The record gives the reactivity of an RNA of 177 nucleotides to DMS and 2A3.
[RMDB]
RNA sequence: GGGAACGACUCGAGUAGAGUCGAAAAACUAGUAUGUACAGGGGUGAGUUGACCUGUGAUCUAGACUGCUGACCAUCAACUCACCGGUCAGCUGGAUGAUGUCCACAGAGUACGACAUCAGUACUCAGUGUAAGCAUGCCUUCGGGUAUGUUUACACAAAAGAAACAACAACAACAAC
Reactivity to DMS in 0.01 (KOAc 150mM, MgCl2 10mM, bicine 150mM(pH8.5), 24C), signal-to-noise 9, nucleotides 027 to 126: a150c020u000a010g010u020a020u020g020u040a010c010a030g000g010g010g010u010g010a100g010u000u000g000a060c030c020u000g000u000g000a040u010c020u000a030g000a180c050u000g000c020u000g000a030c050c020a140u020c120a050a070c110u020c110a080c190c120g000g000u000c000a010g000c000u000g000g010a090u020g010a070u020g000u010c010c030a100c210a100g000a030g000u000a030c040g010a130c150a090u030c100a090g010u000a010c000u000c020a160
Reactivity to 2A3 in 0.01 (KOAc 150mM, MgCl2 10mM, bicine 150mM(pH8.5), 24C), signal-to-noise 9, nucleotides 027 to 126: a000c010u020a010g040u050a060u150g140u120a010c010a010g050g030g030g050u140g090a130g050u070u070g090a090c010c010u010g010u020g000a010u000c000u010a010g080a140c040u040g010c020u010g010a010c010c000a050u120c050a060a090c050u040c090a050c030c040g000g000u000c000a000g000c000u020g010g020a050u090g010a030u080g070u040c010c010a060c050a090g030a010g020u030a020c040g070a030c080a140u110c040a050g010u020a010c010u010c040a010
The DMS profile rests on 83,333 reads.
The data come from the RNA Mapping Database (RMDB), library OK1LIB.
Conditions: 150 mM KOAc, 10 mM MgCl2 and 150 mM bicine (pH 8.5), 24 C.